[RMDB]
An RNA of 170 nucleotides, treated with 2A3 and DMS and read out base by base. The DMS profile rests on 45,614 reads. DMS adducts were read by reverse transcription with MarathonRT.
RNA sequence: GGGAACGACUCGAGUAGAGUCGAAAAACAAUUCACAGAAUGCUGUGUCUCGUUCAAUGCUGGGUCUUACCACUCAGACUGUUGAUUCCUCACAGGGUUCAGAAUACCAGUACGUUAUCUUCUGUCAAACGAUUUCAGUUCGCUGAAAUCAAAAGAAACAACAACAACAAC
Reactivity to 2A3 in 0.01 (KOAc 150mM, MgCl2 10mM, bicine 150mM(pH8.5), 24C), signal-to-noise 9, nucleotides 027 to 129: a000c060a010a040u040u030c020a030c010a040g050a110a060u150g130c000u020g010u000g020u030c030u050c090g070u080u030c030a040a020u050g010c010u010g010g000g000u010c020u070u130a060c030c020a010c010u030c000a050g030a190c030u100g040u030u020g020a080u090u050c010c000u040c010a020c010a020g070g000g010u030u030c010a010g030a040a020u070a110c030c010a030g070u070a050c090g040u080u080a130u110c060u120u010c030u060g130u090c070a100a060a060c100
Reactivity to DMS in 0.01 (KOAc 150mM, MgCl2 10mM, bicine 150mM(pH8.5), 24C), signal-to-noise 7, nucleotides 027 to 129: a030c150a070a040u040u010c000a060c080a120g030a120a040u010g010c030u030g030u020g010u010c080u020c120g040u010u000c030a000a000u040g010c000u000g000g000g000u000c030u000u000a120c180c190a000c030u030c020a020g020a090c020u010g050u010u000g000a090u050u040c030c080u000c040a050c040a010g000g000g090u000u000c050a000g000a020a010u010a140c050c030a060g000u070a060c170g000u000u000a100u050c080u040u020c060u000g000u080c140a000a090a130c120